RNA sequence: GGGAACGACUCGAGUAGAGUCGAAAAGGUGGAAACCGAUCUGAAGAAAGGGCCACAUGAAUUCUGUUCACAGCAUACGCUUUAUAUUAAGGAUGGCGACGAUGGUUACUUCCUUCCUUAUCCAGACAACCACAUUCCUUCGGGAAUGUGAAAAGAAACAACAACAACAAC
Reactivity to 2A3 in 0.01 (KOAc 150mM, MgCl2 10mM, bicine 150mM(pH8.5), 24C), signal-to-noise 9, nucleotides 027 to 129: g040g000u010g010g000a060a060a030c010c000g020a080u000c030u130g120a090a080g060a050a100a040g060g050g040c040c020a040c020a050u100g070a050a090u110u060c060u090g070u110u070c070a040c020a090g040c010a060u090a160c060g020c030u090u150u060a170u070a050u130u210a050a020g050g010a030u030g020g010c010g010a030c030g030a050u060g070g010u080u040a090c040u070u040c020c000u050u150c000c010u040u030a050u040c020c000a010g030a090c030a040a020c040
Reactivity to DMS in 0.01 (KOAc 150mM, MgCl2 10mM, bicine 150mM(pH8.5), 24C), signal-to-noise 9, nucleotides 027 to 129: g030g040u030g020g000a060a070a050c040c050g030a170u000c040u040g030a080a060g020a060a090a140g020g000g030c010c010a090c120a040u060g010a050a050u010u050c050u040g020u000u000c120a060c110a070g020c070a050u040a080c120g000c040u020u020u020a040u050a110u020u010a020a010g030g000a000u030g020g040c170g000a020c040g030a030u050g010g020u010u000a060c100u000u010c000c000u000u000c040c040u060u000a100u050c030c030a050g000a030c150a040a080c090
This 170-nucleotide RNA was probed chemically with 2A3 and DMS. For DMS the reverse transcriptase was MarathonRT. Source: RMDB library 15KLIB, as collected in RNAgym. Conditions: 150 mM KOAc, 10 mM MgCl2 and 150 mM bicine (pH 8.5), 24 C. The DMS profile rests on 47,574 reads. Values cover nucleotides 27 to 129.